[RMDB]
RNA sequence: GGGAACGACUCGAGUAGAGUCGAAAAUGAUCGAGAGAUCUAACGAUGUACGCGAGUCGUGUGCACCGACUCGAGCGAAAGCUCGGUCGAAAGACCGCGUACAUCGGUCGGCAAGUGUACAGUCGACCGAGGCUAUAGGUUUCGACCUAUAGCCUCGAAAAGAAACAACAACAACAAC
Reactivity to 2A3 in 0.01 (KOAc 150mM, MgCl2 10mM, bicine 150mM(pH8.5), 24C), signal-to-noise 1, nucleotides 027 to 126: u110g010a010u000c010g010a000g000a000g000a120u000c010u020a050a020c020g000a000u000g000u010a000c000g010c000g000a010g020u010c030g000u000g010u000g240c030a010c020c000g000a000c000u020c040g010a010g000c000g080a120a000a010g010c000u000c000g010g000u000c000g010a030a000a010g010a000c010c010g000c010g000u000a000c000a000u010c000g000g000u020c010g000g010c020a110a060g040u030g000u050a020c020a020g000u000c000g000a030c030
Reactivity to DMS in 0.01 (KOAc 150mM, MgCl2 10mM, bicine 150mM(pH8.5), 24C), signal-to-noise 3, nucleotides 027 to 126: u010g010a020u000c010g000a300g000a240g000a000u000c010u010a100a100c010g000a010u010g000u000a000c000g030c000g000a020g010u000c010g010u020g000u000g010c030a010c050c000g010a010c000u000c010g010a000g000c000g010a180a090a170g010c000u000c000g000g000u000c000g000a070a060a150g000a010c010c010g000c010g030u010a010c020a010u000c020g000g010u000c010g010g000c000a050a130g000u010g010u000a020c030a280g010u000c000g010a090c260